Chemical mapping of a 207-nucleotide RNA with 2A3. The reactions ran in a buffer of 150 mM KOAc, 10 mM MgCl2 and 150 mM bicine (pH 8.5), at 24 C. The data come from the RNA Mapping Database (RMDB), library OK3TST. The 2A3 profile rests on 579 reads.

[RMDB]
RNA sequence: GGGAACGACUCGAGUAGAGUCGAAAAUCAGGCCAGUGAUGUCGGCCAUUUCUUCGAUAAUCUGCGGUUUGCGCGCUUCUGCGAGGGCCAGCGCCGAGUACGCGAAUUCGCGGUCAAUCAUCACGCCUGUGUCGUUGAUGAACUGAUCCAGCGCGUAUCAGGUGCACAUGUUCGCAUGUGCACCUGAAAAAGAAACAACAACAACAAC
Reactivity to 2A3 in 0.01 (KOAc 150mM, MgCl2 10mM, bicine 150mM(pH8.5), 24C), signal-to-noise 2, nucleotides 027 to 156: u170c040a030g040g000c010c000a000g040u020g210a130u120g170u230c070g010g030c030c020a060u110u070u060c030u080u080c060g120a130u110a180a150u080c000u040g020c020g020g080u040u070u080g070c040g000c000g000c000u240u010c080u210g010c070g040a160g000g010g050c060c050a040g000c040g010c070c000g000a000g060u030a020c030g040c010g020a120a170u290u170c020g000c010g050g040u010c050a000a040u060c000a000u000c000a000c090g020c010c090u230g070u040g010u060c020g070u090u120g000a030u040g010a060a110c050u050g000a000u000c020c000a040g020c000g000c030g000u000a030